Structure probing data (DMS and 2A3) for a 177-nucleotide construct. DMS adducts were read by reverse transcription with MarathonRT. The DMS profile rests on 10,990 reads. Values are in units of 0.01, from 0 to 300, in steps of 10. 2A3 adducts were read by reverse transcription with SuperScript II with manganese. The data come from the RNA Mapping Database (RMDB), library TTRINS. Conditions: 150 mM KOAc, 10 mM MgCl2 and 150 mM bicine (pH 8.5), 24 C. The 2A3 profile rests on 17,143 reads.

[RMDB]
RNA sequence: GGGAACGACUCGAGUAGAGUCGAAAAGAUAUGGAGCAAAGGGAGGACCAUGUAGUCGAUGAAACUGUUUCUCGGAAACGAGAAACAGUGGAGACUAUGGGGUCCGUUGAUCUUUGCUCCUAAGUCAGAGUGAUAAUAUGUUCGCAUAUUAUCACUCAAAAGAAACAACAACAACAAC
Reactivity to DMS in 0.01 (KOAc 150mM, MgCl2 10mM, bicine 150mM(pH8.5), 24C), signal-to-noise 5, nucleotides 027 to 126: g010a070u000a300u000g000g010a010g020c010a000a010a020g000g000g010a050g030g020a010c000c000a110u010g020u010a000g000u010c000g000a130u010g010a180a160a030c000u000g010u000u000u000c000u000c010g010g000a070a070a190c010g010a010g000a000a000a000c000a010g010u000g000g000a060g010a020c000u000a000u010g010g010g020g020u000c000c000g000u010u020g000a070u010c000u000u000u000g000c000u000c000c000u000a000a060g010u000c040a140
Reactivity to 2A3 in 0.01 (KOAc 150mM, MgCl2 10mM, bicine 150mM(pH8.5), 24C), signal-to-noise 3, nucleotides 027 to 126: g030a000u100a030u180g000g000a000g000c010a000a010a000g000g000g010a030g000g000a000c010c010a030u100g010u010a010g010u010c070g230a300u080g020a040a000a010c000u010g000u000u020u000c010u010c010g020g030a070a050a050c000g000a000g000a000a010a000c000a000g000u000g000g010a020g000a010c000u010a010u010g050g010g000g010u000c000c000g000u020u000g000a000u010c000u020u000u000g000c010u000c000c000u000a050a010g030u010c060a070